Record summary:
An RNA of 177 nucleotides, treated with 2A3 and DMS and read out base by base. For 2A3, 519 sequencing reads were counted. For DMS the reverse transcriptase was MarathonRT. It was measured as part of the RMDB library OK1LIB. Values are in units of 0.01, from 0 to 300, in steps of 10. The reactions ran in a buffer of 150 mM KOAc, 10 mM MgCl2 and 150 mM bicine (pH 8.5), at 24 C.
RNA sequence: GGGAACGACUCGAGUAGAGUCGAAAAUCUGUUGCCGAAGUUAGAAUUAGCCACAUGUGGUGCUGCUCCCUACUUGAAUUCUGCUGUUUCCUGCGUUGAUAAAUCGCACCUACGCACUGUAAUGAAAAUGCUUGGUUAACUUCGGUUAACCAAGCAUAAAAGAAACAACAACAACAAC
Reactivity to 2A3 in 0.01 (KOAc 150mM, MgCl2 10mM, bicine 150mM(pH8.5), 24C), signal-to-noise 2, nucleotides 027 to 126: u140c020u090g070u090u090g030c070c000g070a150a000g020u030u160a070g080a220a250u290u040a100g010c000c000a070c060a060u070g040u050g110g070u040g040c000u000g020c000u050c010c000c040u030a040c050u000u000g010a000a120u100u070c000u020g010c000u000g030u060u010u000c000c000u020g000c000g030u000u040g060a150u140a140a100a000u020c000g000c050a000c000c010u110a100c000g000c020a040c130u090g080u170a160a070u060g060a020a140a000
Reactivity to DMS in 0.01 (KOAc 150mM, MgCl2 10mM, bicine 150mM(pH8.5), 24C), signal-to-noise 1, nucleotides 027 to 126: u000c030u000g030u010u010g000c000c000g010a140a050g000u040u000a000g030a150a020u040u010a060g000c000c050a090c020a040u020g040u000g000g100u000g030c020u040g010c020u000c090c000c000u000a110c170u020u000g010a070a100u020u000c050u000g030c030u000g000u000u000u000c010c030u000g010c070g030u000u000g000a140u000a010a060a060u020c120g010c040a100c040c000u000a090c130g010c020a030c050u000g000u020a040a120u000g000a050a060a050